[RMDB]
RNA sequence: GGGAACGACUCGAGUAGAGUCGAAAACGCGUAUACCAGCUCAGGUCAGCCGCUUCCGAGUCUUAACGCAAGAUGAUGUACUCGAAUGCACGGAUCUUUCGUUCGGGCACCCUGGCUGUAUUGGUUGAUUACUGUUGCGGUUCGCCGCAACAGUAAUAAAAGAAACAACAACAACAAC
Reactivity to 2A3 in 0.01 (KOAc 150mM, MgCl2 10mM, bicine 150mM(pH8.5), 24C), signal-to-noise 3, nucleotides 027 to 126: c050g040c030g040u100a040u060a150c020c040a020g020c080u110c220a000g000g040u050c030a060g030c040c030g000c060u150u000c020c020g020a020g020u000c010u080u080a040a010c000g020c020a060a050g000a090u100g020a020u080g060u090a070c060u110c190g100a220a080u110g000c010a000c030g060g100a040u020c000u000u100u070c030g000u020u050c020g000g000g010c020a080c010c050c010u010g020g000c010u000g040u040a110u010u170g090g040u070u000g030
Reactivity to DMS in 0.01 (KOAc 150mM, MgCl2 10mM, bicine 150mM(pH8.5), 24C), signal-to-noise 2, nucleotides 027 to 126: c080g050c090g000u010a090u000a050c040c020a150g000c010u010c080a050g000g010u050c140a030g000c060c050g050c050u030u010c080c070g010a060g000u020c020u010u000a030a050c000g010c050a060a030g010a070u030g020a160u040g000u020a030c040u060c210g030a090a090u070g000c020a060c020g010g000a050u020c060u000u010u010c070g010u000u020c010g030g000g020c010a160c040c050c040u010g020g010c010u010g000u000a040u000u000g000g020u000u010g000
Source information:
Chemical mapping of a 177-nucleotide RNA with 2A3 and DMS. Source: RMDB library OK1LIB, as collected in RNAgym. High 2A3 reactivity points to a flexible backbone, as in loops and unpaired stretches. The 2A3 profile rests on 1,449 reads. Reactivities are given for positions 27 through 126.